[RMDB]
Structure probing data (DMS and 2A3) for a 177-nucleotide construct. The 2A3 profile rests on 1,317 reads. The reactions ran in a buffer of 150 mM KOAc, 10 mM MgCl2 and 150 mM bicine (pH 8.5), at 24 C. For DMS the reverse transcriptase was MarathonRT.
RNA sequence: GGGAACGACUCGAGUAGAGUCGAAAACGGUGGUUAUGGCGCUUACCCCGUGAGGGGGGCUUGGGGAACCGAGUCUAGCGUUGUUAUAAGAAAUCAAUCUUUUGGAUCCAGCCAGGGUCCUCUAGCACACCCCGAUUGAAUUCGUUCAAUCGGGGUGAAAAGAAACAACAACAACAAC
Reactivity to DMS in 0.01 (KOAc 150mM, MgCl2 10mM, bicine 150mM(pH8.5), 24C), signal-to-noise 2, nucleotides 027 to 126: c070g000g000u000g010g000u000u000a080u050g000g010c000g000c030u010u010a170c000c000c020c030g040u040g010a190g000g040g000g020g020g010c000u010u020g010g030g010g010a130a140c000c000g020a010g020u000c020u000a040g010c030g020u000u010g000u000u010a070u010a070a070g000a040a050a080u000c110a120a070u010c020u010u000u010u030g000g000a000u000c010c010a160g020c160c150a190g010g000g010u000c000c000u000c000u000a000g000c300a170
Reactivity to 2A3 in 0.01 (KOAc 150mM, MgCl2 10mM, bicine 150mM(pH8.5), 24C), signal-to-noise 2, nucleotides 027 to 126: c030g030g030u060g000g090u080u000a080u150g020g000c010g000c070u010u150a100c010c000c010c010g020u080g070a190g000g000g010g010g000g000c010u000u020g030g000g000g000a000a050c000c000g020a010g020u000c050u040a020g000c010g010u000u020g040u100u040a150u070a210a130g030a050a100a010u140c090a040a060u020c060u010u070u050u040g000g000a000u000c000c010a010g140c110c020a080g020g000g000u000c000c000u000c020u020a000g000c040a040